Chemical mapping of a 207-nucleotide RNA with 2A3. For 2A3, 653 sequencing reads were counted. It was measured as part of the RMDB library OK3TST.

[RMDB]
RNA sequence: GGGAACGACUCGAGUAGAGUCGAAAACAAUGACAGCGUCAGCGCCAUCUGGAUGGUUUCCGUGUUACUGGGCCUCUCCAACCGCAACUUCCCGUGGCCCAGGACUAUGAUGGUCUUGUAGGUGUUGGUGGCCAUGGAGGUCAUGGGCGCUAAGCCCGCGUAAACCGAAUUUCGAUUCGGUUUACGCAAAAGAAACAACAACAACAAC
Reactivity to 2A3 in 0.01 (KOAc 150mM, MgCl2 10mM, bicine 150mM(pH8.5), 24C), signal-to-noise 1, nucleotides 027 to 156: c010a000a280u200g080a070c070a050g060c050g070u130c020a010g020c000g040c040c070a080u000c070u100g060g000a020u050g150g060u050u220u030c050c000g030u050g060u120u020a250c080u090g000g010g010c000c000u030c020u030c010c020a010a160c060c020g000c100a050a120c000u050u070c050c000c020g000u030g000g050c000c000c000a000g000g000a010c010u030a050u190g020a050u140g040g050u000c040u050u140g070u120a080g010g080u050g010u060u130g020g010u020g020g000c000c020a020u110g150g000a050g050g000u040c060a080u130g010g000g000c000g000c040u070a020a050g030c000c000c040